RNA sequence: GGGAACGACUCGAGUAGAGUCGAAAAAGCUAGGUUACGACCUAGCAUAUUUCAAAUGAUGAUAUUUCCAUGCACCACUCUGAAGCUUUUAUUAGCAUCGUGCAGAUUAUGGAUUUCUGAAAAUUAAUUACAUAAACUUGUUCGCAAGUUUAUGUAAAAAAGAAACAACAACAACAAC
Reactivity to 2A3 in 0.01 (KOAc 150mM, MgCl2 10mM, bicine 150mM(pH8.5), 24C), signal-to-noise 9, nucleotides 027 to 126: a000g010c010u000a010g010g020u030u040a070c210g050a020c040c000u000a000g000c000a000u110a010u010u070u040c030a020a090a070u140g060a030u040g020a010u020a080u110u060u000c010c000a020u030g010c010a010c030c010a070c060u130c040u130g060a070a030g030c020u100u080u070u110a250u240u120a050g000c010a030u080c040g020u020g010c020a010g020a080u090u110a030u180g030g010a020u000u040u030c030u070g090a090a040a020a040u160u160a050a090
Reactivity to DMS in 0.01 (KOAc 150mM, MgCl2 10mM, bicine 150mM(pH8.5), 24C), signal-to-noise 7, nucleotides 027 to 126: a110g010c000u000a010g000g010u000u010a140c180g010a060c000c000u000a000g020c000a030u000a020u000u010u000c050a090a120a090u010g000a140u000g000a080u010a040u020u010u010c000c000a030u000g010c070a050c090c130a100c110u020c100u030g020a060a110g010c020u000u000u010u030a110u020u010a040g020c010a060u010c100g010u000g000c050a050g010a130u020u020a040u010g000g000a050u000u000u000c030u000g000a070a050a070a080u010u020a050a130

This 177-nucleotide RNA was probed chemically with 2A3 and DMS. It was measured as part of the RMDB libraries RFM100 and RFMREP. Reactivities are given for positions 27 through 126. 2A3 adducts were read by reverse transcription with SuperScript II with manganese.